[RMDB]
RNA sequence: GGGAACGACUCGAGUAGAGUCGAAAAUUGAAUUGGGAGUGCUGCUGUAAUGGUUGAUGUUGGAUUGAGAGUAAGGAGUCCUACUGGAUACGUUGAAACUACGGUAACCACUCGCCUUACCAAGACGAUUGGAUCGUAUAAUUUUCCUCUAUACAACAAAUGACUCGAAUUUCGAUUCGAGUCAUUUAAAAGAAACAACAACAACAAC
Reactivity to 2A3 in 0.01 (KOAc 150mM, MgCl2 10mM, bicine 150mM(pH8.5), 24C), signal-to-noise 2, nucleotides 027 to 156: u040u050g040a010a010u060u040g000g040g000a050g030u050g030c000u000g000c010u040g040u120a110a100u110g100g000u050u050g060a070u050g010u040u020g000g050a070u030u050g030a060g000a000g050u020a090a100g050g050a050g040u040c000c000u060a120c050u010g000g030a030u000a130c050g010u010u040g060a020a030a010c070u000a010c010g040g010u010a160a010c000c000a000c000u030c020g020c010c000u110u070a170c030c080a030a020g010a010c000g020a020u030u010g060g000a020u020c000g010u010a060u010a070a090u090u070u020u060c010c010u000c020u040a130u030a110c050a120a010c000
Reactivity to DMS in 0.01 (KOAc 150mM, MgCl2 10mM, bicine 150mM(pH8.5), 24C), signal-to-noise 2, nucleotides 027 to 156: u010u000g000a160a140u000u020g010g030g020a060g050u000g030c040u010g050c000u010g010u000a100a100u000g010g030u000u000g000a070u000g010u000u000g010g020a130u000u020g000a120g010a100g040u010a030a090g000g020a090g020u000c040c040u010a090c050u000g020g010a130u000a020c050g020u000u010g010a150a100a100c070u000a030c030g050g000u010a090a110c020c020a000c060u010c020g010c020c020u000u000a180c210c160a110a170g020a020c020g010a060u000u000g000g010a140u000c030g000u000a040u000a050a140u010u010u020u000c010c000u010c090u000a140u010a100c050a090a130c080